[RMDB]
RNA sequence: GGGAACGACUCGAGUAGAGUCGAAAAGUUGCCGUUAUCCUCGCCACCAUACAAUGAGACUCCGAGGAUGAGUUGUGGUUUUUCGGAGAGGCCGUUUUUGAUUUCUCGCCGGGCUGGCGGGUGUUCGUAUGUCCUUAUGCUUCGGCAUAAGGACAUAAAAAGAAACAACAACAACAAC
Reactivity to DMS in 0.01 (KOAc 150mM, MgCl2 10mM, bicine 150mM(pH8.5), 24C), signal-to-noise 1, nucleotides 027 to 126: g000u000u000g000c010c030g000u000u010a070u000c030c000u010c050g020c040c040a090c030c040a140u020a100c200a080a110u020g000a140g000a090c050u000c050c010g000a030g000g010a060u000g000a070g000u000u000g020u000g010g010u010u010u000u000u010c030g000g000a030g020a080g020g020c070c060g020u000u030u000u010u010g020a110u000u000u000c000u000c020g030c140c000g000g000g020c150u010g010g010c030g030g000g000u010g000u010u000c130g060
About this RNA:
An RNA of 177 nucleotides, treated with DMS and read out base by base. It was measured as part of the RMDB library OK2TST.